An RNA of 177 nucleotides, treated with 2A3 and DMS and read out base by base.
RNA sequence: GGGAACGACUCGAGUAGAGUCGAAAACAUCUCUUCGUCUAGUGAGGGAUUCGUGCUGCGUUGGCCUCAUUAUUAUUCGCUUUACGGACGAGCGUGUAACAUCACGGCACGAAGAGAAUCAGGUGGCUCUCUGAGUACGUUUCGACGUGCUCGGGGGAAAAGAAACAACAACAACAAC
Reactivity to 2A3 in 0.01 (KOAc 150mM, MgCl2 10mM, bicine 150mM(pH8.5), 24C), signal-to-noise 9, nucleotides 027 to 126: c030a080u020c000u000c000u020u020c010g040u010c040u070a120g020u020g040a030g030g090g040a060u050u060c030g010u040g060c060u060g020c020g040u040u060g050g070c000c010u040c060a030u010u120a040u060u030a040u030u060c020g000c000u040u030u080a050c050g040g040a020c020g010a010g000c010g000u010g010u020a040a030c010a060u060c040a010c000g020g000c080a000c010g000a000a000g010a000g010a010a060u080c020a020g050g060u050g040g010c010
Reactivity to DMS in 0.01 (KOAc 150mM, MgCl2 10mM, bicine 150mM(pH8.5), 24C), signal-to-noise 9, nucleotides 027 to 126: c110a140u010c000u000c010u000u000c010g000u000c030u010a110g020u000g000a030g010g010g000a150u020u000c040g010u000g010c070u010g000c050g010u000u010g010g000c010c020u000c050a040u010u020a080u020u010a030u000u000c040g000c020u000u000u020a150c080g010g000a060c100g000a030g010c010g000u000g000u010a030a060c120a090u020c120a080c100g000g010c150a020c010g010a010a010g000a020g000a040a090u020c130a070g010g010u020g010g000c060